[RMDB]
RNA sequence: GGGAACGACUCGAGUAGAGUCGAAAAGAUAUGGACUGGCAAGGGAGUCCGAGUAUCGGAAACGAUACGGACAUCGAUCUUGUCCAGUCCUAAGUCAAACGUAUACAGCGUUCGCGCUGUAUACGAAGACUUCAGAUAUGUUCGCAUAUCUGAAGUCAAAAGAAACAACAACAACAAC
Reactivity to DMS in 0.01 (KOAc 150mM, MgCl2 10mM, bicine 150mM(pH8.5), 24C), signal-to-noise 7, nucleotides 027 to 126: g000a030u000a190u010g000g000a010c000u000g000g000c010a010a010g000g010g010a140g020u000c000c010g010a170g020u000a010u000c000g000g000a060a030a130c010g010a020u000a020c000g000g010a010c000a300u000c300g000a070u000c000u000u010g000u010c000c000a010g000u000c000c000u000a000a050g010u000c020a090a130a290c020g010u000a000u000a000c000a000g010c000g030u000u020c280g030c020g040c000u000g000u010a000u000a000c000g000a060a080
Reactivity to 2A3 in 0.01 (KOAc 150mM, MgCl2 10mM, bicine 150mM(pH8.5), 24C), signal-to-noise 7, nucleotides 027 to 126: g010a000u030a030u080g000g010a010c000u000g000g000c010a010a010g090g180g100a120g060u000c020c020g020a190g060u010a010u010c000g010g020a040a010a010c010g010a010u000a010c000g010g000a010c000a100u300c190g300a260u040c010u020u020g110u110c000c000a000g000u000c000c000u000a010a000g010u010c020a110a030a090c010g000u000a000u000a000c010a000g000c000g060u080u150c220g010c000g030c150u010g000u000a000u000a000c000g000a010a040
Chemical mapping of a 177-nucleotide RNA with DMS and 2A3. For 2A3, 26,701 sequencing reads were counted. The data come from the RNA Mapping Database (RMDB), library TTRDES. Conditions: 150 mM KOAc, 10 mM MgCl2 and 150 mM bicine (pH 8.5), 24 C. For DMS, 13,668 sequencing reads were counted. For 2A3 the reverse transcriptase was SuperScript II with manganese.